[RMDB]
RNA sequence: GGGAACGACUCGAGUAGAGUCGAAAACGUGAACAUCGCUCUGCUAAGUCCCGUCGUUCUUCCAGUCAGAGCGAGAUUGUAAGCAACCUUAUGCGCAAUGAAGACAUAGAGGGACUUCUUGAACAAGGCUCGAUAGGGAUUUCGAUCCCUAUCGAGCAAAAGAAACAACAACAACAAC
Reactivity to DMS in 0.01 (KOAc 150mM, MgCl2 10mM, bicine 150mM(pH8.5), 24C), signal-to-noise 1, nucleotides 027 to 126: c050g000u080g000a090a170c030a200u000c000g020c000u000c000u030g030c150u060a070a050g000u000c040c070c030g070u020c000g020u010u000c080u000u000c070c080a150g060u070c000a000g040a000g000c040g000a070g000a050u000u000g000u000a070a210g020c010a000a120c200c020u000u000a020u010g050c100g000c070a020a090u020g000a090a120g000a130c120a040u010a000g020a040g030g000g030a160c040u000u000c060u040u000g000a100a070c130a060a050g000
Reactivity to 2A3 in 0.01 (KOAc 150mM, MgCl2 10mM, bicine 150mM(pH8.5), 24C), signal-to-noise 2, nucleotides 027 to 126: c030g050u080g070a030a020c050a050u000c000g020c020u000c010u070g020c060u050a030a000g080u010c020c040c020g020u080c010g000u070u020c010u040u120c070c000a050g090u060c010a010g000a000g060c000g000a000g000a040u070u110g020u080a140a130g010c000a030a150c010c010u270u160a110u100g000c020g000c030a020a050u120g060a130a000g030a010c130a010u190a000g160a090g020g000g000a000c000u090u020c010u000u130g050a160a110c110a210a000g090

Chemical mapping of a 177-nucleotide RNA with DMS and 2A3. Reactivities are given for positions 27 through 126. For DMS the reverse transcriptase was MarathonRT. The reactions ran in a buffer of 150 mM KOAc, 10 mM MgCl2 and 150 mM bicine (pH 8.5), at 24 C. The DMS profile rests on 1,238 reads. The data come from the RNA Mapping Database (RMDB), library OK1LIB.